[RMDB]
RNA sequence: GGGAACGACUCGAGUAGAGUCGAAAAAGGUUCGCUGUGGUGCAACUCUUAUUAGUAACUAAUCCAACGCAAGUAUAGGAGAACAGGUUUUUAACUAUUUUUAGGCAGAUAAAAAAUAGUAUUUGACAAAAUCGAUUGUCGUUCGCGACAAUCGAAACUAGAGUGACAAGUUCGCUUGUCACUCUAGAAAAGAAACAACAACAACAAC
Reactivity to 2A3 in 0.01 (KOAc 150mM, MgCl2 10mM, bicine 150mM(pH8.5), 24C), signal-to-noise 1, nucleotides 027 to 156: a000g070g010u090u060c030g000c020u030g010u030g050g040u040g010c030a040a060c040u030c010u140u130a110u080u070a070g060u080a070a100c070u060a130a050u020c040c000a070a020c020g010c080a060a020g030u030a060u100a150g000g040a040g030a070a040c060a050g080g000u040u040u000u000u020a020a000c000u000a000u010u000u000u020u020a000g070g000c050a030g070a100u160a070a080a000a010a000a000u020a000g020u020a120u080u050u160g040a020c020a020a150a010a080u030c000g000a000u000u000g000u000c000g000u030u050c230g010c000g090a000c000a010a000u000c000g000a000a000a000
Reactivity to DMS in 0.01 (KOAc 150mM, MgCl2 10mM, bicine 150mM(pH8.5), 24C), signal-to-noise 1, nucleotides 027 to 156: a070g000g010u000u040c000g060c060u000g000u010g030g040u020g000c040a100a150c010u000c020u010u000a130u000u010a100g020u000a070a070c110u000a060a170u000c030c000a070a110c080g000c060a080a130g000u000a130u010a120g040g000a070g000a070a130c010a040g000g020u000u000u010u000u010a000a130c010u000a020u000u000u000u000u000a030g030g040c070a200g020a180u020a000a000a020a050a030a030u000a000g040u030a130u000u030u000g020a220c150a040a030a160a260u000c000g010a060u000u000g010u000c010g000u000u010c280g020c000g000a040c020a010a010u000c000g010a000a020a070

The record gives the reactivity of an RNA of 207 nucleotides to 2A3 and DMS. For DMS, 1,609 sequencing reads were counted.